Chemical mapping of a 207-nucleotide RNA with 2A3 and DMS. For 2A3, 1,056 sequencing reads were counted. Values cover nucleotides 27 to 156. 2A3 adducts were read by reverse transcription with SuperScript II with manganese. The data come from the RNA Mapping Database (RMDB), library OK3TST. For DMS the reverse transcriptase was MarathonRT.
RNA sequence: GGGAACGACUCGAGUAGAGUCGAAAAGUCAUUCAUAUCUAUCUGUAAUACAGUUCUGGCUAAUUUAAGAGGAUAAGCUUGAAGACCUCUGGAAUUUUUCGGCUUUAGGACUUUAAGGCUUUCUGAGCUUCAGUAGAUCUAGAUCUAGGAGCUCAUGACUCUUGUGAUAGUUCGCUAUCACAAGAGUAAAAGAAACAACAACAACAAC
Reactivity to 2A3 in 0.01 (KOAc 150mM, MgCl2 10mM, bicine 150mM(pH8.5), 24C), signal-to-noise 3, nucleotides 027 to 156: g000u000c020a090u170u070c060a040u180a230u210c130u090a130u070c090u070g090u130a090a060u120a170c040a010g000u040u020c020u080g030g010c030u020a060a080u100u110u060a050a010g000a010g040g010a020u090a220a020g100c060u090u130g080a050a020g040a060c000c000u020c010u070g030g050a010a020u060u050u040u100u190c050g020g000c000u130u090u100a000g010g000a000c000u050u100u050a030a020g040g000c010u040u100u050c070u060g000a010g000c010u020u010c000a160g100u040a000g000a000u000c050u170a050g020a180u000c000u030a020g000g000a000g010c000u000c010a020u090g020
Reactivity to DMS in 0.01 (KOAc 150mM, MgCl2 10mM, bicine 150mM(pH8.5), 24C), signal-to-noise 1, nucleotides 027 to 156: g010u000c000a170u000u010c050a160u010a060u010c040u000a090u000c060u000g000u000a070a140u000a300c030a110g000u000u010c070u020g050g020c060u000a050a050u000u010u000a050a020g010a060g010g030a090u000a030a070g020c050u000u000g010a060a160g010a120c010c010u000c020u000g000g030a040a030u000u000u000u000u000c090g030g020c020u000u000u010a040g010g010a080c020u000u010u000a050a100g050g000c040u000u010u000c020u020g000a030g010c000u000u030c050a090g010u000a030g010a040u010c060u020a210g020a300u000c000u010a100g000g000a050g010c000u000c000a010u000g000